This 177-nucleotide RNA was probed chemically with 2A3 and DMS. Source: RMDB library OK2TRN, as collected in RNAgym. The 2A3 profile rests on 4,348 reads. 2A3 adducts were read by reverse transcription with SuperScript II with manganese.
RNA sequence: GGGAACGACUCGAGUAGAGUCGAAAAACACGAGUCAGCUCAGACUUGUGCGAGUACCGAUUCUGCAAUCGGUGCAGAGUCUAGUCUACGCUGACUGGACUAGUAAGUGAAUGCAGAUUCACUUGCAUGAUGAUUAGCUGUUCGCAGCUAAUCAUCAAAAAGAAACAACAACAACAAC
Reactivity to 2A3 in 0.01 (KOAc 150mM, MgCl2 10mM, bicine 150mM(pH8.5), 24C), signal-to-noise 2, nucleotides 027 to 126: a000c050a010c030g030a000g000u010c010a010g000c010u020c080a010g020a010c000u030u030g080u110g060c010g050a050g020u010a010c000c000g010a000u040u030c060u300g120c150a030a040u010c020g000g000u010g000c010a040g020a010g170u010c040u020a000g000u000c000u010a010c090g000c030u000g000a000c000u010g000g010a020c030u030a040g030u030a010a000g020u000g000a010a010u040g020c090a020g010a270u000u000c010a000c000u000u000g000c020a030
Reactivity to DMS in 0.01 (KOAc 150mM, MgCl2 10mM, bicine 150mM(pH8.5), 24C), signal-to-noise 6, nucleotides 027 to 126: a140c110a120c070g010a030g020u000c010a030g000c030u000c250a080g010a010c010u010u010g020u010g010c020g000a300g020u000a030c020c010g000a020u000u000c180u020g020c270a050a030u000c000g020g020u000g010c020a060g000a300g000u000c000u000a010g000u000c010u000a120c140g010c040u000g000a020c010u010g010g010a150c130u000a030g020u000a000a010g010u000g000a010a000u010g020c300a060g010a040u000u000c000a010c000u000u000g010c010a160